[RMDB]
RNA sequence: GGGAACGACUCGAGUAGAGUCGAAAAUUCCUGAGGAUUAAUGACCAGCUGGGAGGAACCAGUGGCCCUUGGCUCUGCCUCCCAGCCAGCCAUUAAUUCCGAGGAAAUGUCUUUUGCUGAGGUCGUUCUCAACAUUAUCUUUCGAGAUAAUGUUGAGAAAAGAAACAACAACAACAAC
Reactivity to DMS in 0.01 (KOAc 150mM, MgCl2 10mM, bicine 150mM(pH8.5), 24C), signal-to-noise 4, nucleotides 027 to 126: u010u000c000c000u010g000a260g000g040a000u010u000a020a000u000g000a030c020c020a180g020c010u000g010g000g030a040g020g040a300a130c300c020a010g000u030g000g000c030c000c110u010u040g000g000c020u000c010u020g000c000c000u000c000c000c000a020g000c000c020a040g000c040c000a000u000u000a010a000u020u000c000c020g000a110g000g000a000a040a060u010g000u010c020u000u000u000u010g030c030u000g000a130g010g000u000c030g000u000u000
Reactivity to 2A3 in 0.01 (KOAc 150mM, MgCl2 10mM, bicine 150mM(pH8.5), 24C), signal-to-noise 7, nucleotides 027 to 126: u020u010c010c000u040g060a130g040g000a000u000u000a000a000u010g020a020c020c030a010g000c000u000g000g000g000a010g020g020a050a080c120c010a030g010u200g100g000c000c030c080u170u300g010g000c000u010c000u020g030c000c000u000c000c000c000a010g000c000c000a000g000c000c000a000u010u000a000a010u160u020c000c010g000a020g010g010a010a040a040u130g040u040c040u010u080u130u100g030c040u030g020a060g070g050u020c010g000u030u000

This 177-nucleotide RNA was probed chemically with DMS and 2A3. It was measured as part of the RMDB libraries RFM100 and RFMREP. The reactions ran in a buffer of 150 mM KOAc, 10 mM MgCl2 and 150 mM bicine (pH 8.5), at 24 C. For 2A3 the reverse transcriptase was SuperScript II with manganese.